Record summary: Source: RMDB library OK3TST, as collected in RNAgym. Structure probing data (2A3 and DMS) for a 207-nucleotide construct. The 2A3 profile rests on 1,025 reads. The RNA was probed in 150 mM KOAc, 10 mM MgCl2 and 150 mM bicine (pH 8.5) at 24 C. The DMS profile rests on 1,792 reads. DMS adducts were read by reverse transcription with MarathonRT.
RNA sequence: GGGAACGACUCGAGUAGAGUCGAAAAGAUAUAGUAAUAUAGCCCUGACAGGAUCAACGUGUAGAAAUAAUAAUAUAACAUUAAUACAUUUCGUCAGAGUAUACCAUAACUUCCGUUAGGAGAGCUACAUAGUAAUAAUGAGCAUUCAUAGGUAUUAGAGUAGCAACUGCUUCGGCGGUUGCUGCUCAAAAGAAACAACAACAACAAC
Reactivity to 2A3 in 0.01 (KOAc 150mM, MgCl2 10mM, bicine 150mM(pH8.5), 24C), signal-to-noise 2, nucleotides 027 to 156: g020a000u080a000u120a200g030u090a120a130u100a150u070a100g020c000c010c010u010g010a000c010a100g020g030a040u180c050a050a090c070g030u050g030u060a010g050a060a140a050u070a070a010u050a100a070u170a190u160a300a030c000a010u020u200a110a090u060a070c000a030u050u080u250c040g020u030c020a020g030a000g060u070a010u020a070c020c010a030u000a140a050c030u060u080c030c000g080u070u050a000g020g000a030g020a020g030c030u100a080c030a050u120a030g080u120a070a040u050a100a040u140g050a010g010c010a000u050u050c030a030u140a150g000g040u110a050u110u120a030
Reactivity to DMS in 0.01 (KOAc 150mM, MgCl2 10mM, bicine 150mM(pH8.5), 24C), signal-to-noise 1, nucleotides 027 to 156: g030a140u000a080u000a070g000u000a080a190u000a060u000a280g000c010c000c010u000g050a040c010a090g030g000a100u010c030a090a070c120g000u030g000u010a080g000a230a140a110u010a100a240u050a130a110u040a300u020a070a120c010a140u010u010a000a130u000a150c050a010u000u000u000c000g000u000c020a060g010a050g000u000a170u020a070c070c000a050u000a070a020c010u000u000c000c010g010u000u020a150g010g000a100g000a150g030c020u000a090c060a140u000a100g030u000a070a060u000a120a100u050g030a100g040c070a040u000u000c050a070u010a140g000g010u000a110u030u000a160
Values cover nucleotides 27 to 156.